[RMDB]
RNA sequence: GGGAACGACUCGAGUAGAGUCGAAAAUCGUCCUUUGGGAUUAUGAACGUAGCAAUAUUUAUGGUACUGCUACUAUUGGUGUAUGUAAGUACACUGAUAUUGAUGUUAAUUCAGCUUUGAAUAUAUGGACAUCACUGUAGUUCGCUACAGUGAUGUCAAAAGAAACAACAACAACAAC
Reactivity to DMS in 0.01 (KOAc 150mM, MgCl2 10mM, bicine 150mM(pH8.5), 24C), signal-to-noise 2, nucleotides 027 to 126: u000c160g000u000c000c010u000u020u010g010g000g010a060u000u010a030u000g060a120a070c160g010u000a020g000c010a010a060u010a010u000u000u020a110u000g020g000u000a010c100u000g000c000u000a000c010u000a030u000u000g000g030u000g010u000a010u000g010u020a080a160g020u000a010c000a010c030u000g010a000u000a040u010u000g020a140u000g020u010u000a080a050u000u010c030a100g020c200u010u010u000g000a030a060u010a100u010a090u020g000
Reactivity to 2A3 in 0.01 (KOAc 150mM, MgCl2 10mM, bicine 150mM(pH8.5), 24C), signal-to-noise 2, nucleotides 027 to 126: u060c000g000u020c000c010u040u080u040g080g000g000a050u060u060a080u150g120a100a000c050g000u010a010g000c000a010a050u020a050u070u200u120a120u260g090g020u010a010c010u000g030c020u020a020c010u000a030u000u020g070g000u020g000u010a000u030g040u070a110a140g000u000a000c010a010c030u000g000a000u010a010u030u130g070a050u100g000u100u040a080a010u040u010c020a040g030c120u110u230u140g080a130a010u050a020u020a030u130g040
Notes: This 177-nucleotide RNA was probed chemically with DMS and 2A3. DMS adducts were read by reverse transcription with MarathonRT. Values are in units of 0.01, from 0 to 300, in steps of 10. The reactions ran in a buffer of 150 mM KOAc, 10 mM MgCl2 and 150 mM bicine (pH 8.5), at 24 C. High DMS reactivity at an A or C suggests that its Watson-Crick edge is free. The 2A3 profile rests on 1,693 reads.